[RMDB]
RNA sequence: GGGAACGACUCGAGUAGAGUCGAAAAGCACCAGAGAGCGUACGCUGAAUGAAUAGACUUAUCGCUGGAGUUCUCAUACCCCUUGCAGAGUGUCUGAGAAAGUCGGAUUCCCUGAUUCCACCUAGGAAAUUUGGAUUCAGUAGAUUUGGAAAGUUCCGACAUUUUUCAAGUUCGCUUGAAAAAUGUCAAAAGAAACAACAACAACAAC
Reactivity to DMS in 0.01 (KOAc 150mM, MgCl2 10mM, bicine 150mM(pH8.5), 24C), signal-to-noise 2, nucleotides 027 to 156: g000c060a120c040c040a140g010a150g010a080g010c080g060u000a090c040g040c050u000g000a050a100u000g010a090a140u000a100g020a060c040u000u010a080u010c030g030c050u000g000g000a220g000u000u000c040u000c070a140u000a120c040c010c010c010u000u010g000c030a090g000a050g050u000g020u000c020u010g000a100g010a090a050a110g000u000c000g030g000a060u000u000c000c000c020u020g010a120u000u000c040c010a040c100c060u040a130g020g020a060a080a100u000u010u000g020g000a090u000u000c000a040g000u000a150g010a170u000u000u000g010g000a060a080a300g010u010u000c040c020
Reactivity to 2A3 in 0.01 (KOAc 150mM, MgCl2 10mM, bicine 150mM(pH8.5), 24C), signal-to-noise 2, nucleotides 027 to 156: g000c010a020c040c030a000g020a000g000a010g070c050g020u070a040c110g020c070u060g100a100a090u090g020a100a070u130a090g090a050c020u050u100a050u130c000g000c050u050g010g050a030g050u080u000c030u030c020a030u130a070c020c020c010c000u030u080g010c030a000g040a020g080u090g050u010c010u010g020a030g040a080a080a000g040u010c000g000g050a050u030u020c010c000c000u020g010a020u030u000c000c020a050c040c100u090a020g060g130a050a110a080u120u070u160g020g000a000u030u000c010a020g030u090a040g040a190u110u140u140g030g000a130a050a030g090u150u040c080c030
Chemical mapping of a 207-nucleotide RNA with DMS and 2A3. For 2A3, 1,110 sequencing reads were counted. It was measured as part of the RMDB library OK3TST.